[RMDB]
RNA sequence: GGGAACGACUCGAGUAGAGUCGAAAAAUCAUUCAAAAGCAAGUGACUUUCUGAUGACCUUCCUAGCAGUAAUUGUAGAGGAAGCCUAAUCACAUUAUUUUUGAAUAGCAGAAGUUACAGAAUAAUAGACGAAGUGAAAGUUCGCUUUCACUUCGUCAAAAGAAACAACAACAACAAC
Reactivity to 2A3 in 0.01 (KOAc 150mM, MgCl2 10mM, bicine 150mM(pH8.5), 24C), signal-to-noise 2, nucleotides 027 to 126: a020u060c030a020u200u000c030a030a080a050a150g000c000a020a180g040u010g060a020c000u060u210u050c040u110g000a080u040g090a080c000c000u000u030c000c000u070a020g000c000a000g000u300a300a170u300u010g020u010a070g000a010g120g010a000a010g010c000c000u040a000a020u040c020a000c020a110u110u300a080u050u160u030u070u130g050a020a020u020a020g040c040a000g020a090a000g010u000u020a010c020a020g120a140a030u150a210a020u050a060
Reactivity to DMS in 0.01 (KOAc 150mM, MgCl2 10mM, bicine 150mM(pH8.5), 24C), signal-to-noise 2, nucleotides 027 to 126: a030u000c070a050u010u010c040a070a060a020a070g040c260a160a110g010u000g020a030c070u000u000u000c050u000g010a070u000g040a110c230c010u000u000c000c000u000a210g060c040a030g000u010a140a080u020u000g030u000a080g020a050g000g020a030a000g010c130c030u000a050a080u000c050a080c150a060u000u010a110u000u000u000u000u000g000a050a070u010a010g010c090a040g000a050a050g010u000u000a010c030a170g000a080a170u020a070a070u000a150